[RMDB]
RNA sequence: GGGAACGACUCGAGUAGAGUCGAAAAGAUAUGGAGAAAUAAGACAGCAUUUACCUACCCACCUCGGAAACGAGAGGGUAUAUGCAAUGACGUUUCUCCUAAGUCAAAACUACCGUUCGCGGUAGAAGGAACAGAAGUAGUUCGCUACUUCUGUUCCAAAAGAAACAACAACAACAAC
Reactivity to DMS in 0.01 (KOAc 150mM, MgCl2 10mM, bicine 150mM(pH8.5), 24C), signal-to-noise 3, nucleotides 027 to 126: g010a080u020a300u010g000g020a020g040a000a010a060u000a150a200g000a160c230a110g010c030a000u000u000u000a000c000c060u010a060c010c030c080a300c080c000u000c000g000g000a060a060a170c020g000a030g000a190g000g000g000u000a000u000a010u010g000c000a110a090u010g000a160c300g000u010u000u010c000u010c000c000u000a040a060g000u000c070a070a060a090a060c000u000a000c000c000g010u000u010c290g010c020g010g010u010a000g040a100a090
Reactivity to 2A3 in 0.01 (KOAc 150mM, MgCl2 10mM, bicine 150mM(pH8.5), 24C), signal-to-noise 4, nucleotides 027 to 126: g050a030u140a110u270g000g010a020g030a010a030a000u160a220a090g170a070c040a020g080c000a010u070u040u060a040c020c010u080a170c060c020c010a050c010c000u010c000g010g060a080a060a060c020g010a010g000a020g010g000g000u010a000u000a000u010g000c070a040a220u110g090a070c110g010u000u000u000c000u000c000c010u000a140a010g090u070c070a000a000a170a190c010u000a020c010c010g040u030u090c300g000c010g130g000u010a000g010a050a050